[RMDB]
RNA sequence: GGGAACGACUCGAGUAGAGUCGAAAAUACCUUGAGUAUUGCUGAAUUCAGUUUAGCGUGCAUGCUCUUGGCUAUUCGCAUAGUGAUUGUCAAAUUUGGAGUUACUUAUUCGUCAAUUCAAUAUUUAAAAAGGUGCCGAUGUUCGCAUCGGCACCAACUAACCUAAGGACUUCGGUCCUUAGGUUAGAAAAGAAACAACAACAACAAC
Reactivity to DMS in 0.01 (KOAc 150mM, MgCl2 10mM, bicine 150mM(pH8.5), 24C), signal-to-noise 1, nucleotides 027 to 156: u010a030c000c010u030u000g000a060g020u010a000u000u000g020c000u000g000a080a120u000u000c160a270g010u000u010u000a060g090c080g020u010g000c140a250u000g000c010u000c010u010u000g030g000c060u000a170u010u000c010g070c100a140u000a110g030u000g010a090u010u020g010u010c000a060a060a100u010u010u000g000g030a090g000u030u000a080c080u010u000a090u010u000c110g010u000c040a060a110u010u000c010a000a120u000a110u000u000u000a060a040a130a260a140g070g050u000g000c010c000g030a040u000g020u000u000c300g030c000a030u000c010g050g060c000a000c010c000a010a010
Reactivity to 2A3 in 0.01 (KOAc 150mM, MgCl2 10mM, bicine 150mM(pH8.5), 24C), signal-to-noise 2, nucleotides 027 to 156: u060a010c010c010u030u030g010a000g040u010a060u130u150g020c010u030g030a210a130u210u170c030a080g160u060u140u150a050g070c070g020u110g020c020a010u040g010c000u020c030u000u010g010g020c010u060a060u040u110c030g050c100a040u070a150g060u060g110a080u050u040g020u000c030a030a090a120u070u040u180g130g020a070g050u090u050a050c060u010u120a050u120u060c040g040u000c010a030a030u110u000c040a040a120u060a170u130u190u240a110a070a030a020a020g020g010u000g010c000c000g000a000u010g030u020u090c230g000c160a000u000c000g020g000c000a000c000c000a000a000
This 207-nucleotide RNA was probed chemically with DMS and 2A3. The reactions ran in a buffer of 150 mM KOAc, 10 mM MgCl2 and 150 mM bicine (pH 8.5), at 24 C. Reactivities are given for positions 27 through 156. For DMS the reverse transcriptase was MarathonRT. For 2A3, 646 sequencing reads were counted. For DMS, 1,678 sequencing reads were counted.